The record gives the reactivity of an RNA of 177 nucleotides to DMS.
It was measured as part of the RMDB library M2PK50.
[RMDB]
RNA sequence: GGGAACGACUCGAGUAGAGUCGAAAAGCGCCUCGGUUCGCCGAGGCGCAAACAAAGACGAAAAGCGGAAAAACGUGAAAACCGCAAAAAGAAACAAAGAAAAAACCGUAUGCUUCGGCAUACGGAACUGAUAAGCAUAGUUCGCUAUGCUUAUCAGAAAAGAAACAACAACAACAAC
Reactivity to DMS in 0.01 (KOAc 150mM, MgCl2 10mM, bicine 150mM(pH8.5), 24C), signal-to-noise 1, nucleotides 027 to 126: g000c010g020c000c000u020c000g020g000u000u010c190g030c020c020g020a000g020g020c010g090c020a000a010a060c050a070a110a080g020a190c110g000a060a080a140a160g000c000g000g000a070a100a040a130a070c210g030u010g000a100a090a170a130c000c010g010c040a000a030a020a090a040g000a050a050a060c050a040a020a110g000a000a090a030a120a160a060c000c000g000u000a000u000g000c020u000u020c230g050g000c000a000u000a000c010g030g000a000a000